An RNA of 207 nucleotides, treated with DMS and 2A3 and read out base by base. The reactions ran in a buffer of 150 mM KOAc, 10 mM MgCl2 and 150 mM bicine (pH 8.5), at 24 C. For DMS, 2,049 sequencing reads were counted. The data come from the RNA Mapping Database (RMDB), library ARCHII.

RNA sequence: GGGAACGACUCGAGUAGAGUCGAAAACUUAAUUGCAGCUGACAUGCACUCCUGGUACCUUCGGGUCCAGCAAUCAUCAGGGGAUGUCUGUAAACCCAAAAUGAUUGUCAUAUAGAACAGAAUCGCCGUGCAGUACGUUGUGGACGAAGCGGCUAAAGGUUUUAACAUACUUCGGUAUGUUAAAACCAAAAGAAACAACAACAACAAC
Reactivity to DMS in 0.01 (KOAc 150mM, MgCl2 10mM, bicine 150mM(pH8.5), 24C), signal-to-noise 1, nucleotides 027 to 156: c030u000u000a030a100u000u020g010c000a020g010c050u010g020a080c060a100u020g010c000a110c060u000c100c020u000g040g020u010a050c030c000u010u010c240g020g030g010u000c040c050a040g000c030a010a020u010c000a020u000c010a300g010g020g030g000a070u000g000u020c110u020g010u010a110a040a290c010c000c000a000a030a110a070u010g000a060u010u000g020u000c020a000u010a230u010a100g010a070a230c070a130g000a040a080u000c100g010c010c010g010u000g040c050a140g020u000a050c060g000u010u000g000u010g000g000a030c020g000a040a260g030c000g000g000c020u000a040a070a280
Reactivity to 2A3 in 0.01 (KOAc 150mM, MgCl2 10mM, bicine 150mM(pH8.5), 24C), signal-to-noise 3, nucleotides 027 to 156: c030u080u120a070a100u210u110g020c020a040g050c040u150g110a100c050a160u070g000c030a040c070u130c050c010u020g020g030u180a060c000c000u020u030c190g090g000g020u040c010c000a000g000c010a010a000u010c010a000u010c020a030g010g040g000g000a040u090g050u020c020u000g040u030a110a110a110c020c000c020a010a060a000a000u010g000a000u000u010g000u000c020a050u150a020u050a160g080a070a020c020a020g040a070a020u070c020g000c000c010g000u070g040c140a020g000u000a020c050g040u030u020g010u060g020g000a000c010g020a020a000g000c000g020g000c030u020a030a020a000